Structure probing data (2A3 and DMS) for a 177-nucleotide construct. Reactivities are given for positions 27 through 126. For DMS, 2,557 sequencing reads were counted. It was measured as part of the RMDB library OK2TST.
RNA sequence: GGGAACGACUCGAGUAGAGUCGAAAAAAAGUAGUCGUAAUCGCGGGGCAGCAGCACCCGUGCCGUGACUCGUUGCGGGUGCCCGCGUGGCCGCAGGCCCACCUCGCACACCUCGACCAGGUCCCCGCAGGGAAUGCGUAUUCGUACGCAUUCCCUGAAAAGAAACAACAACAACAAC
Reactivity to 2A3 in 0.01 (KOAc 150mM, MgCl2 10mM, bicine 150mM(pH8.5), 24C), signal-to-noise 2, nucleotides 027 to 126: a010a000a000g110u130a020g000u030c020g020u020a000a050u070c050g000c000g000g000g010g040c060a180g000c020a000g040c000a050c000c020c000g030u020g000c000c010g130u120g140a110c130u000c190g000u030u020g000c000g010g030g000u020g040c010c020c010g010c020g000u080g040g000c020c020g300c180a040g000g040c020c000c000a010c000c000u010c010g030c000a000c010a020c020c030u020c010g010a010c020c000a010g060g050u040c000c000c010c000g020
Reactivity to DMS in 0.01 (KOAc 150mM, MgCl2 10mM, bicine 150mM(pH8.5), 24C), signal-to-noise 4, nucleotides 027 to 126: a050a050a100g020u010a040g020u000c010g000u000a080a050u010c120g020c010g020g010g000g020c150a110g010c110a160g000c010a020c000c010c010g030u010g000c100c010g010u010g000a100c220u000c030g000u010u010g010c000g000g010g020u000g000c020c060c080g020c070g030u000g010g010c020c020g010c240a060g010g020c020c020c240a240c010c010u010c010g000c020a080c160a070c090c070u010c020g020a040c030c060a140g000g020u000c020c000c000c210g020